RNA sequence: GGGAACGACUCGAGUAGAGUCGAAAAUCUAUGGAUGCAGUUCACAGGCCAGAUGGCAAUGGGUAUCCUAGUGGGAUAUAUAUAUAUGGAUGCUUAAGAUAUGGUCGAGCUUCUCUCGAAAGAGAGGAGGUAGCACUGUUCCGUAGGUGAACCUGCGCUUAUAGCCUGUCUUCGGACAGGCUAUAAGAAAAGAAACAACAACAACAAC
Reactivity to DMS in 0.01 (KOAc 150mM, MgCl2 10mM, bicine 150mM(pH8.5), 24C), signal-to-noise 1, nucleotides 027 to 156: u010c050u000a080u000g000g000a070u000g010c000a050g030u000u010c080a080c130a270g020g000c020c030a060g000a230u000g030g010c060a100a110u000g030g010g010u010a020u010c000c000u010a120g040u030g090g020g020a150u000a100u000a090u020a080u000a160u000a160u030g020g000a130u000g030c050u010u000a030a160g030a050u000a080u010g010g030u020c020g000a150g020c000u000u000c020u000c020u000c000g010a180a110a190g000a020g000a010g060g000a010g000g020u000a050g000c120a090c030u000g020u000u010c020c020g020u000a050g020g010u000g000a050a120c040c010u000g000c180g020
Reactivity to 2A3 in 0.01 (KOAc 150mM, MgCl2 10mM, bicine 150mM(pH8.5), 24C), signal-to-noise 2, nucleotides 027 to 156: u000c000u010a000u010g030g000a040u140g040c020a010g010u010u050c080a040c060a090g030g000c020c010a040g030a100u180g140g000c040a080a130u160g010g020g000u000a000u010c000c010u030a070g080u160g140g100g030a010u070a020u030a000u010a000u010a030u010a030u270g010g000a000u010g020c040u070u040a160a070g010a120u070a090u060g010g000u000c010g050a090g010c000u010u030c000u000c010u000c000g030a080a050a020g010a020g000a000g010g000a000g000g030u020a030g000c030a000c000u000g000u020u000c000c000g000u000a000g010g000u010g010a020a080c000c000u050g050c090g000

The record gives the reactivity of an RNA of 207 nucleotides to DMS and 2A3. Conditions: 150 mM KOAc, 10 mM MgCl2 and 150 mM bicine (pH 8.5), 24 C. The data come from the RNA Mapping Database (RMDB), library RSTRND. 2A3 adducts were read by reverse transcription with SuperScript II with manganese.